[RMDB]
RNA sequence: GGGAACGACUCGAGUAGAGUCGAAAAGGUCGUCUUUUCGAAGACGACCACUGUCGUUCCCAAAACUUUUCGAAACAUCUCGAAAGACAUGCUGAAACAGAAUUGGUGUGUGUUUCGACACACACAAGACAUGUCUAGUAUUCGUACUAGACAUGUCAAAAGAAACAACAACAACAAC
Reactivity to DMS in 0.01 (KOAc 150mM, MgCl2 10mM, bicine 150mM(pH8.5), 24C), signal-to-noise 7, nucleotides 027 to 126: g010g010u000c000g010u000c000u000u000u000u010c190g000a020a010g020a010c010g000a010c000c000a010c070u000g000u000c000g010u000u000c000c000c000a060a040a090a100c100u000u000u000u000c020g010a090a100a120c130a040u010c160u000c010g000a040a050a090g010a070c130a020u010g010c050u000g000a090a060a070c190a060g010a080a110u010u010g010g010u000g010u000g020u000g010u000u000u010c160g010a040c000a000c010a010c000a010c020a070a070
Reactivity to 2A3 in 0.01 (KOAc 150mM, MgCl2 10mM, bicine 150mM(pH8.5), 24C), signal-to-noise 9, nucleotides 027 to 126: g000g000u000c000g000u010c010u010u050u030u100c200g100a010a000g000a000c000g000a000c000c000a000c010u020g000u000c000g000u000u000c000c000c000a000a000a010a000c010u010u030u030u010c010g040a100a170a130c080a230u120c040u010c080g020a040a020a010g050a040c060a100u180g040c080u160g060a110a120a060c070a090g170a220a200u230u230g080g000u000g000u000g000u000g010u010u050u100c150g020a000c000a000c000a000c000a000c010a010a020
Notes
The data come from the RNA Mapping Database (RMDB), library M2PK50. Chemical mapping of a 177-nucleotide RNA with DMS and 2A3. For DMS the reverse transcriptase was MarathonRT. For DMS, 10,787 sequencing reads were counted. For 2A3 the reverse transcriptase was SuperScript II with manganese.